Source: RMDB library RNAMAK, as collected in RNAgym. Chemical mapping of a 207-nucleotide RNA with DMS and 2A3.

RNA sequence: GGGAACGACUCGAGUAGAGUCGAAAAAUAUGGUUCGCCAUAUGAGACCGCGUACUACAAAGCAUCGAUCGACCCACCGAGUACGCUCCCAAAUAGGAGCGUAUGUUUGACGUGGUGUCGGGAGCUUUGUAUCGCAUAGCUCACGUUUCGACGUGAAGCGCCGUUAUAUAUUCGUAUAUAACGGCGCAAAAGAAACAACAACAACAAC
Reactivity to DMS in 0.01 (KOAc 150mM, MgCl2 10mM, bicine 150mM(pH8.5), 24C), signal-to-noise 1, nucleotides 027 to 156: a110u000a020u000g030g020u000u010c130g000c000c000a090u000a000u000g010a060g010a220c070c090g020c020g040u000a040c100u000a040c010a010a040a050g000c010a220u000c030g020a100u000c000g010a060c020c000c000a010c020c000g010a100g000u000a010c000g010c010u000c000c000c000a040a170a110u010a040g000g010a020g020c000g040u000a010u000g010u000u000u010g020a110c150g000u010g000g050u020g000u000c000g000g000g020a120g010c000u000u000u010g010u000a030u000c020g000c030a090u000a070g010c030u000c030a030c030g000u000u000u010c050g010a050c060g020u000g000a070a150
Reactivity to 2A3 in 0.01 (KOAc 150mM, MgCl2 10mM, bicine 150mM(pH8.5), 24C), signal-to-noise 5, nucleotides 027 to 156: a000u010a000u010g010g030u030u100c210g060c090c010a000u010a010u020g070a060g080a030c030c040g000c010g050u040a120c020u000a010c010a000a010a000g010c030a300u110c040g250a120u040c010g000a030c000c000c000a000c010c010g000a010g000u000a000c000g000c000u000c010c020c030a110a260a080u260a050g010g000a010g000c010g030u010a010u010g110u020u130u160g060a070c040g000u000g000g090u190g020u090c000g000g020g000a000g010c020u040u020u000g000u000a040u300c000g000c030a020u140a070g020c010u010c020a010c000g010u020u100u180c240g100a010c010g020u060g070a110a080
The 2A3 profile rests on 3,456 reads.